[RMDB]
RNA sequence: GGGAACGACUCGAGUAGAGUCGAAAAUCAUCACGCUGCCCGCCGCGUCGAUACCGAUCUUGGAAAAGAAGGUCACGAACGGGCUGACAUGUUCUUUGUAGGCGGUAUAGGGCAGCAGCAGGGCCAGCUGGGAUACGGUGUUCGCACCGUAUCCCAGAAAAGAAACAACAACAACAAC
Reactivity to DMS in 0.01 (KOAc 150mM, MgCl2 10mM, bicine 150mM(pH8.5), 24C), signal-to-noise 1, nucleotides 027 to 126: u080c000a050u000c100a140c150g000c000u010g020c010c010c000g000c140c030g010c050g000u000c000g000a090u030a080c090c000g010a150u020c030u000u020g000g030a160a030a020a010g000a000a220g000g000u000c040a040c000g030a130a240c200g000g000g000c130u000g000a010c010a200u040g010u010u030c060u000u030u030g030u070a050g000g000c000g050g070u000a030u060a030g000g040g000c010a000g030c010a000g010c120a100g010g000g000c110c030a030g000
Reactivity to 2A3 in 0.01 (KOAc 150mM, MgCl2 10mM, bicine 150mM(pH8.5), 24C), signal-to-noise 2, nucleotides 027 to 126: u020c000a020u040c030a000c130g030c000u050g000c000c010c010g020c000c000g050c080g020u090c050g030a050u110a130c010c000g220a300u030c040u070u120g020g140a030a060a000a050g010a000a000g050g030u000c000a060c130g030a300a080c060g070g120g010c060u000g020a030c000a010u290g090u030u030c000u000u030u040g110u030a050g150g000c010g000g050u030a030u070a040g070g030g000c000a000g000c000a000g030c010a000g000g090g030c060c000a020g030